This 207-nucleotide RNA was probed chemically with 2A3 and DMS. For 2A3, 3,710 sequencing reads were counted.

RNA sequence: GGGAACGACUCGAGUAGAGUCGAAAAGCCACCAUGCCCGGCUAAUUUUUUGCAGUUUUAGUAGAGACCAAGUUUCACCAUGUUAGCCAGGAUGGUCUCGAUCUCCUGACCUUGUGAUCCACCUACCUCGACCUCCCAAAGUUCUGGAAUUGCAGGCCUUAAUUACUGUUUUCGAACAGUAAUUAAGAAAAGAAACAACAACAACAAC
Reactivity to 2A3 in 0.01 (KOAc 150mM, MgCl2 10mM, bicine 150mM(pH8.5), 24C), signal-to-noise 5, nucleotides 027 to 156: g040c030c030a030c030c020a050u150g070c040c030c020g030g020c040u070a040a070u060u130u080u130u160u130g030c040a040g040u010u050u120u160a070g010u120a040g030a010g010a060c030c030a130a020g000u020u060u110c040a060c030c010a040u100g030u090u090a020g010c010c010a010g020g030a040u050g000g000u010c000u010c030g020a040u000c020u020c000c010u020g040a060c010c040u040u070g030u040g050a040u030c000c010a010c020c020u040a040c020c010u020c010g040a090c010c030u040c010c000c000a040a070a000g030u110u060c060u060g030g040a060a050u060u070g020c020a020g020g050c000
Reactivity to DMS in 0.01 (KOAc 150mM, MgCl2 10mM, bicine 150mM(pH8.5), 24C), signal-to-noise 2, nucleotides 027 to 156: g010c010c030a060c030c010a060u000g000c020c010c020g030g040c020u000a020a010u000u000u000u000u010u010g020c040a110g010u000u010u000u010a080g020u000a130g010a110g000a060c020c040a040a130g010u010u000u000c040a100c040c040a060u000g020u000u000a040g020c020c010a040g020g010a060u000g020g000u000c000u000c040g010a060u000c030u000c020c010u000g010a050c020c060u010u000g010u000g000a060u000c030c020a050c020c000u000a040c020c010u000c020g020a060c030c030u010c000c020c010a060a050a110g010u000u000c040u000g000g000a070a090u000u000g020c020a060g040g020c110